[RMDB]
RNA sequence: GGGAACGACUCGAGUAGAGUCGAAAAAGCCUAUGAUCUACGGAUCAUAGGCAAUCUAGUUCUCACGAACUAGGCUAAGUUAUGGCGUGCUUUCAGCACUACGCGAUCAUCUACGGAUGAUCGCGAAGUCACAUUGAUCUUUCGAGAUCAAUGUGACAAAAGAAACAACAACAACAAC
Reactivity to 2A3 in 0.01 (KOAc 150mM, MgCl2 10mM, bicine 150mM(pH8.5), 24C), signal-to-noise 6, nucleotides 027 to 126: a000g010c000c000u000a000u000g010a010u000c010u020a050c270g140g000a000u000c000a000u010a000g000g000c000a000a000u000c000u010a000g000u000u000c080u030c020a040c110g000a010a000c000u010a000g030g000c040u120a120a070g130u240u130a150u220g180g080c110g010u010g010c030u130u300u260c140a020g000c000a000c020u050a060c030g000c000g000a000u000c000a000u000c010u010a020c190g150g000a000u000g000a000u000c000g000c000g010a010a010
Reactivity to DMS in 0.01 (KOAc 150mM, MgCl2 10mM, bicine 150mM(pH8.5), 24C), signal-to-noise 3, nucleotides 027 to 126: a110g000c000c000u000a000u000g000a010u010c010u010a110c150g040g000a000u000c000a020u020a000g010g010c000a000a000u010c000u000a010g010u010u000c000u040c270a120c290g000a010a020c000u000a010g000g010c130u010a130a050g000u030u030a080u000g000g010c110g010u000g010c010u000u010u020c150a120g020c030a040c010u010a130c040g020c020g000a010u000c000a000u000c010u000a130c210g020g000a010u000g000a000u000c010g000c000g000a010a020

The record gives the reactivity of an RNA of 177 nucleotides to 2A3 and DMS. The RNA was probed in 150 mM KOAc, 10 mM MgCl2 and 150 mM bicine (pH 8.5) at 24 C.